This 207-nucleotide RNA was probed chemically with DMS and 2A3. For DMS the reverse transcriptase was MarathonRT. Source: RMDB library RSTRND, as collected in RNAgym. Conditions: 150 mM KOAc, 10 mM MgCl2 and 150 mM bicine (pH 8.5), 24 C.
[RMDB]
RNA sequence: GGGAACGACUCGAGUAGAGUCGAAAACUCGCUGCUUAAGUGAGAUGACGACCGUGCAGCCCGGCCUUUGGCGUCGCGGAAGUCACUAAAAAAGAAGGCUAGCCCAGGCGAUUCUCCAUAGCCGACGGCGAAACUUUAUGGAGCUACGGCCUGCGAGGAUAAGAGAAAGGUUCGCCUUUCUCUUAUCAAAAGAAACAACAACAACAAC
Reactivity to DMS in 0.01 (KOAc 150mM, MgCl2 10mM, bicine 150mM(pH8.5), 24C), signal-to-noise 3, nucleotides 027 to 156: c030u010c030g030c000u010g000c080u000u000a080a100g030u000g000a090g020a110u000g000a080c010g020a300c020c010g000u000g020c120a110g000c030c010c100g000g020c020c030u000u010u010g020g020c030g020u000c040g020c020g000g000a080a300g000u000c020a050c030u000a000a070a100a080a030a150g000a090a070g020g010c000u000a180g000c000c010c000a300g020g020c010g000a110u000u000c010u000c010c010a120u000a300g000c010c000g040a100c130g020g010c020g000a110a050a080c110u010u000u010a070u010g030g000a160g000c090u010a070c070g020g000c020c030u000g010c020g020a120g020
Reactivity to 2A3 in 0.01 (KOAc 150mM, MgCl2 10mM, bicine 150mM(pH8.5), 24C), signal-to-noise 4, nucleotides 027 to 156: c000u000c010g010c010u070g000c060u280u300a120a020g010u020g020a050g010a050u140g000a010c000g000a010c000c010g020u020g010c020a010g000c030c000c000g060g000c020c000u020u000u000g000g000c000g000u020c000g000c020g010g010a020a040g000u050c110a100c240u260a120a140a030a010a000a000g020a000a000g010g000c000u010a010g000c000c000c010a000g010g000c010g020a020u120u030c010u000c000c000a010u000a000g000c000c010g040a030c050g010g000c010g000a010a010a000c010u170u230u130a030u030g010g000a010g000c010u090a070c040g040g000c010c040u070g060c060g050a090g060